[RMDB]
RNA sequence: GGGAACGACUCGAGUAGAGUCGAAAAGAUAUGGAGUUGAGGGAGCAACAGCUACACGUAUCGGAAACGAUAUGUAGACAUGCUCCGCAACUCCUAAGUCAAAAGGGACAUCCUUCGGGAUGUCCCAUCCUCCGUAGUUGUUCGCAACUACGGAGGAAAAAGAAACAACAACAACAAC
Reactivity to 2A3 in 0.01 (KOAc 150mM, MgCl2 10mM, bicine 150mM(pH8.5), 24C), signal-to-noise 2, nucleotides 027 to 126: g010a000u020a000u030g000g010a000g010u050u000g050a140g130g090g000a040g020c120a210a150c060a300g050c000u040a010c080a010c090g210u130a010u010c010g000g040a000a000a000c010g000a000u000a010u120g030u010a010g010a030c070a280u300g010c010u000c000c010g040c000a000a010c000u000c000c000u000a010a000g000u000c020a040a000a050a150g040g000g000a010c010a000u030c010c010u050u090c300g110g000g000a010u000g000u000c000c010c000a000
Reactivity to DMS in 0.01 (KOAc 150mM, MgCl2 10mM, bicine 150mM(pH8.5), 24C), signal-to-noise 2, nucleotides 027 to 126: g000a050u000a040u010g000g000a040g000u010u000g020a080g000g010g000a000g010c020a150a080c300a090g060c030u000a020c000a060c300g010u010a020u000c010g010g000a040a020a050c000g000a010u010a050u000g010u000a010g000a040c070a300u020g020c000u010c000c030g000c000a000a000c000u000c000c000u000a000a000g000u000c000a060a100a090a100g020g010g010a020c000a000u000c000c000u000u010c290g040g010g010a020u000g020u000c000c000c000a000

The record gives the reactivity of an RNA of 177 nucleotides to 2A3 and DMS. 2A3 adducts were read by reverse transcription with SuperScript II with manganese. The 2A3 profile rests on 2,919 reads. Source: RMDB library TTRDES, as collected in RNAgym.